[RMDB]
RNA sequence: GGGAACGACUCGAGUAGAGUCGAAAACCCACCUAAGCCAAAGGGACUGAGUGGCUCCCCAUAAGGGAAUAGGUGAGGGAAAGGAGGAUAGCAAUUAUCUAAGGUGGGAAGCCACAGGGAUGCCACAUACAGAGGGUUGCAGCUGAAAUCGCCUUAGUCGUAGGCAUAUAUUCGUAUAUGCCUACGAAAAAGAAACAACAACAACAAC
Reactivity to 2A3 in 0.01 (KOAc 150mM, MgCl2 10mM, bicine 150mM(pH8.5), 24C), signal-to-noise 6, nucleotides 027 to 156: c010c000c000a030c020c020u060a060a030g060c010c030a100a060a030g050g020g010a070c070u100g030a020g070u000g010g010c020u020c000c000c000c000a080u110a080a100g100g010g000a040a070u110a100g100g020u180g060a140g010g020g000a050a080a050g060g020a030g010g020a020u060a070g060c070a150a140u210u070a060u180c040u080a050a080g060g000u030g010g000g030a030a010g010c010c000a010c020a010g020g000g020a030u150g030c010c010a020c010a030u180a030c040a040g090a050g020g020g040u050u030g010c030a010g010c020u040g020a000a060a090u130c050g020c010c000u040u050a030g040
Reactivity to DMS in 0.01 (KOAc 150mM, MgCl2 10mM, bicine 150mM(pH8.5), 24C), signal-to-noise 3, nucleotides 027 to 156: c050c000c000a070c030c040u010a080a140g030c010c050a080a110a100g000g000g010a060c040u000g000a100g050u000g010g000c020u010c000c010c000c040a210u000a120a130g000g000g020a140a130u030a070g010g030u000g000a180g000g000g020a070a070a110g020g010a120g010g010a030u000a090g010c110a100a130u010u000a090u010c070u020a060a120g030g030u010g010g010g000a080a080g030c060c040a050c040a080g040g020g000a080u010g000c000c010a020c050a140u000a110c090a090g020a050g020g020g000u000u010g000c010a070g010c010u010g000a050a070a060u000c050g030c020c000u000u000a090g030
Structure probing data (2A3 and DMS) for a 207-nucleotide construct.
The 2A3 profile rests on 4,578 reads.
For 2A3 the reverse transcriptase was SuperScript II with manganese.
The data come from the RNA Mapping Database (RMDB), library OK3TST.